[RMDB]
The record gives the reactivity of an RNA of 207 nucleotides to DMS and 2A3.
RNA sequence: GGGAACGACUCGAGUAGAGUCGAAAAUUCCAUUUGAGUAUCCUGAAAACGGGCUCUUCAGCAUGGAACGUACAUAUUAAAUAGUAGGAGUGCAUAGUGGCCCGUAUAGCAGGCAUUAACAUUCCUGAAAACGUGAAAAGGUUCGCCUUUUCACGAACACCACUGUGUGGUUCGCCACACAGUGGUGAAAAGAAACAACAACAACAAC
Reactivity to DMS in 0.01 (KOAc 150mM, MgCl2 10mM, bicine 150mM(pH8.5), 24C), signal-to-noise 1, nucleotides 027 to 156: u000u000c010c000a170u000u010u000g040a080g000u000a180u000c010c000u010g020a080a080a210a170c040g000g020g020c050u000c000u000u020c130a110g070c080a080u000g000g040a060a110c040g010u000a100c100a110u000a190u070u010a160a180a230u000a220g010u000a040g010g000a250g010u000g010c010a220u000a130g060u000g000g020c020c000c000g010u000a040u000a050g000c050a020g040g010c110a100u000u020a020a120c110a160u000u000c000c000u010g000a020a090a120a220c020g000u000g000a010a000a010a020g000g020u000u010c300g020c000c000u000u000u000u000c000a000c000g010a080a070
Reactivity to 2A3 in 0.01 (KOAc 150mM, MgCl2 10mM, bicine 150mM(pH8.5), 24C), signal-to-noise 2, nucleotides 027 to 156: u020u050c010c020a030u190u060u050g040a020g080u070a030u220c000c000u060g010a090a050a000a000c000g010g000g000c030u040c000u170u060c120a060g000c010a010u040g030g110a200a080c030g100u070a010c030a010u100a080u150u300a050a160a110u180a070g020u010a020g000g160a040g020u020g020c000a030u020a040g070u130g050g030c010c000c020g000u020a010u030a020g000c000a000g000g030c000a000u010u000a040a000c000a060u060u110c000c030u040g080a010a030a070a090c000g000u010g000a030a000a020a000g030g020u050u120c160g130c000c000u000u000u000u050c000a000c000g000a000a000
It was measured as part of the RMDB library M2RFPK. In probing experiments dimethyl sulfate is read out at A N1 and C N3, which are open when not base-paired. For DMS the reverse transcriptase was MarathonRT. Values cover nucleotides 27 to 156. For DMS, 1,164 sequencing reads were counted.